[RMDB]
RNA sequence: GGGAACGACUCGAGUAGAGUCGAAAAUGAAACGAAGGGGGGACGGAGAAGGCUAUGUUGGCCGGGCGACGGUUGUCCCGGUUUAAGCGUGUAGGCUGGUUAUCCAGGCAAAUCCGGAGAAAAAAAAGUACAGUUAAGCUUUCGAGCUUAACUGUACAAAAGAAACAACAACAACAAC
Reactivity to DMS in 0.01 (KOAc 150mM, MgCl2 10mM, bicine 150mM(pH8.5), 24C), signal-to-noise 2, nucleotides 027 to 126: u010g010a070a040a140c060g000a090a130g000g000g000g000g000g010a130c080g020g040a050g010a070a070g000g000c010u000a010u030g010u000u000g010g010c010c030g000g020g000c300g010a080c150g020g010u010u000g010u000c020c000c010g000g000u000u010u000a060a080g030c030g060u000g000u000a070g000g010c030u000g010g000u000u000a090u020c010c040a050g030g010c010a110a110a070u000c030c010g000g000a090g010a030a000a000a020a040a080a080a120
This 177-nucleotide RNA was probed chemically with DMS. The reactions ran in a buffer of 150 mM KOAc, 10 mM MgCl2 and 150 mM bicine (pH 8.5), at 24 C.